[RMDB]
RNA sequence: GGGAACGACUCGAGUAGAGUCGAAAACACUGCAUGAGGCAAGCGACGCUCGAAGAUGGCGAAGCACGGUCCGCUCUGGGCGUCUGUGCGUAGGUGGGUCGGUGUGAGCGAGGCGUUUGCAGAGGGACAUGGGAGUCCCAUUCGUGGGACUCCCAUGAAAAGAAACAACAACAACAAC
Reactivity to 2A3 in 0.01 (KOAc 150mM, MgCl2 10mM, bicine 150mM(pH8.5), 24C), signal-to-noise 3, nucleotides 027 to 126: c060a020c010u090g000c020a130u100g060a080g000g090c040a030a040g000c020g050a060c000g020c030u000c010g060a030a030g070a130u110g020g100c040g090a030a010g030c030a000c030g000g030u040c010c020g020c090u040c040u160g000g030g000c000g050u080c070u130g070u060g020c010g130u100a040g070g080u140g000g080g050u080c100g000g050u090g050u120g060a000g000c020g030a020g040g080c050g010u020u000u050g010c010a000g030a030g010g080g000a020
Reactivity to DMS in 0.01 (KOAc 150mM, MgCl2 10mM, bicine 150mM(pH8.5), 24C), signal-to-noise 2, nucleotides 027 to 126: c070a150c080u040g000c000a080u000g000a170g000g010c030a060a100g040c090g000a080c050g020c010u040c020g000a150a120g000a080u050g000g000c040g000a090a300g010c000a030c010g000g010u000c150c020g060c070u000c090u000g000g000g000c000g030u040c070u030g000u010g000c000g010u000a130g000g020u000g000g000g000u030c010g000g010u050g000u020g000a090g030c000g020a090g010g010c030g000u020u010u050g040c030a090g020a090g010g010g030a190

Source information:
Structure probing data (2A3 and DMS) for a 177-nucleotide construct. The data come from the RNA Mapping Database (RMDB), library OK1LIB. 2A3 adducts were read by reverse transcription with SuperScript II with manganese. For DMS the reverse transcriptase was MarathonRT. The DMS profile rests on 3,270 reads. The reactions ran in a buffer of 150 mM KOAc, 10 mM MgCl2 and 150 mM bicine (pH 8.5), at 24 C. Reactivities are given for positions 27 through 126.